The data come from the RNA Mapping Database (RMDB), library RFM100. Structure probing data (DMS) for a 177-nucleotide construct. Reactivities are given for positions 27 through 126. For DMS, 1,148 sequencing reads were counted.
RNA sequence: GGGAACGACUCGAGUAGAGUCGAAAAGCUCGGCUCGGGCGCCGACGAAGGGCGUGCCAAGCUGCGAAAAGCCCGGGGGAGGCGCAAGGAGCCUUAGAACCCGGGAUUCCCGAAUGGGAUAUCCUGUCCAAAACAAACCAUUCGUGGUUUGUUUUGGAAAAGAAACAACAACAACAAC
Reactivity to DMS in 0.01 (KOAc 150mM, MgCl2 10mM, bicine 150mM(pH8.5), 24C), signal-to-noise 1, nucleotides 027 to 126: g000c020u020c300g000g050c000u000c030g000g000g020c000g020c000c000g040a050c130g030a300a070g010g000g020c000g000u000g000c000c000a060a170g010c030u000g000c000g080a120a130a190a300g000c040c000c000g000g000g000g020g060a080g030g000c000g000c120a070a030g010g000a010g000c000c000u010u020a070g000a170a170c030c010c000g000g000g020a040u000u000c010c020c000g030a240a140u020g000g000g030a070u040a000u010c000c020u000g000u010